[RMDB]
Overview: Conditions: 150 mM KOAc, 10 mM MgCl2 and 150 mM bicine (pH 8.5), 24 C. This 177-nucleotide RNA was probed chemically with DMS and 2A3. Source: RMDB library OK2TST, as collected in RNAgym.
RNA sequence: GGGAACGACUCGAGUAGAGUCGAAAAACGCUGCGUCCCGGCUUGGCCUUGUACUUCAGCGCGCGGGGUAGCCGAAACAGCGCCACCGUAGCCGGGUGCGGAUAGACCUCGAUGGCCCGCCGCGUGGAUCAAACACGGGAUUCGUCCCGUGUUUGAUAAAAGAAACAACAACAACAAC
Reactivity to DMS in 0.01 (KOAc 150mM, MgCl2 10mM, bicine 150mM(pH8.5), 24C), signal-to-noise 2, nucleotides 027 to 126: a090c140g000c020u000g030c060g010u020c010c000c000g020g000c030u020u000g020g000c040c030u000u020g020u000a100c210u000u000c070a110g030c080g010c010g000c010g000g000g000g000u000a090g040c040c030g000a060a080a080c090a050g020c220g010c000c010a070c300c100g020u000a040g010c000c000g020g000g000u000g000c000g020g020a070u000a030g010a120c020c000u010c140g010a060u000g010g000c000c030c040g020c020c000g040c010g030u000g020g010
Reactivity to 2A3 in 0.01 (KOAc 150mM, MgCl2 10mM, bicine 150mM(pH8.5), 24C), signal-to-noise 1, nucleotides 027 to 126: a000c030g000c030u030g000c010g050u140c000c000c000g000g010c020u090u100g020g000c020c000u060u110g000u070a100c060u120u110c060a060g040c000g000c000g000c010g040g000g020g050u060a080g000c050c050g110a090a100a030c010a010g030c040g000c040c030a110c030c060g160u120a040g000c000c020g040g000g000u010g020c000g020g000a030u120a060g050a020c010c000u050c100g060a090u180g020g000c090c010c030g030c000c060g000c040g010u020g050g050